[RMDB]
RNA sequence: GGGAACGACUCGAGUAGAGUCGAAAAUAUUUUAAAGAACAAUUAAAGCAAAUUGAUCAUCCAUCAAUUAAAGAAGUCCGUGGACGUGGUUUGUUUAUAGGUGUGGAACUUAAUGAAAGUGCUAGACAAACGAAUUUAAGUUCGCUUAAAUUCGUUUAAAAGAAACAACAACAACAAC
Reactivity to DMS in 0.01 (KOAc 150mM, MgCl2 10mM, bicine 150mM(pH8.5), 24C), signal-to-noise 4, nucleotides 027 to 126: u040a010u030u020u020u010a040a050a130g000a120a120c030a070a090u030u010a050a090a090g010c080a040a060a030u000u000g000a020u000c070a110u030c080c050a220u010c030a030a050u010u010a070a070a120g000a090a120g020u000c050c050g020u010g000g000a050c060g030u000g000g020u010u010u010g010u000u010u020a050u010a060g000g020u000g000u020g000g010a040a020c080u010u010a070a080u030g010a060a040a040g010u010g010c020u010a030g000a120c180
Reactivity to 2A3 in 0.01 (KOAc 150mM, MgCl2 10mM, bicine 150mM(pH8.5), 24C), signal-to-noise 3, nucleotides 027 to 126: u060a050u010u140u030u150a110a090a080g110a050a010c000a070a040u270u240a190a030a000g030c020a020a030a060u010u070g020a040u040c020a030u000c070c000a010u060c050a010a160u040u130a140a120a060g070a020a000g090u000c050c040g040u080g030g060a010c010g020u000g000g040u010u000u130g040u020u080u040a120u060a050g030g000u060g010u070g060g050a030a020c010u060u020a080a070u180g130a090a010a000g060u060g070c050u040a000g030a070c070
Annotation: The record gives the reactivity of an RNA of 177 nucleotides to DMS and 2A3. DMS (dimethyl sulfate) methylates the pairing face of unpaired adenines and cytosines. 2A3 adducts were read by reverse transcription with SuperScript II with manganese. For DMS, 7,800 sequencing reads were counted. For 2A3, 1,622 sequencing reads were counted. The data come from the RNA Mapping Database (RMDB), library OK1LIB. The reactions ran in a buffer of 150 mM KOAc, 10 mM MgCl2 and 150 mM bicine (pH 8.5), at 24 C. Reactivities are given for positions 27 through 126.